[RMDB]
RNA sequence: GGGAACGACUCGAGUAGAGUCGAAAAAAGUUAUUCUUGCUAGACGAUACCCCUUACGCUGAACCUGUCUCUUUGGCUGGUAUCGUUAAGUAUCAAGCAUGGCGGUUUCCUAACGGAACCACGGGUUUCACAAUGGGUAGAGUCUCUGUACAACAACGCUGUAUGAAAUAUUCGUAUUUCAUACAGCAAAAGAAACAACAACAACAAC
Reactivity to DMS in 0.01 (KOAc 150mM, MgCl2 10mM, bicine 150mM(pH8.5), 24C), signal-to-noise 3, nucleotides 027 to 156: a080a080g020u010u000a050u010u000c030u010u020g030c030u000a160g020a040c010g030a250u000a030c010c010c060c090u000u000a090c150g050c040u020g020a030a050c000c010u000g020u000c080u010c070u000u000u010g020g000c030u010g010g010u000a000u010c040g000u010u010a040a100g020u010a030u010c020a030a080g030c000a090u000g020g020c080g020g020u000u000u030c010c000u010a140a200c160g010g000a000a010c000c010a070c050g010g010g010u000u010u010c050a050c010a120a230u000g000g000g000u000a030g000a300g010u010c000u010c060u000g010u000a140c090a070a120c100a070a110c170
Reactivity to 2A3 in 0.01 (KOAc 150mM, MgCl2 10mM, bicine 150mM(pH8.5), 24C), signal-to-noise 5, nucleotides 027 to 156: a000a000g120u090u030a120u100u030c040u040u040g030c020u030a010g010a010c010g010a010u000a000c000c000c010c030u050u080a070c100g080c150u020g010a010a010c000c000u030g060u090c020u040c040u300u110u120g140g000c000u020g000g020u030a030u130c030g090u050u050a080a050g010u010a010u050c030a070a060g020c050a040u080g130g000c060g050g000u020u110u110c000c000u060a120a040c080g010g000a000a000c010c000a010c020g020g020g000u030u150u150c020a020c010a020a030u050g000g000g000u000a020g000a010g000u010c010u000c020u030g020u050a100c030a100a020c010a040a000c110

This 207-nucleotide RNA was probed chemically with DMS and 2A3. High DMS reactivity at an A or C suggests that its Watson-Crick edge is free. For DMS the reverse transcriptase was MarathonRT.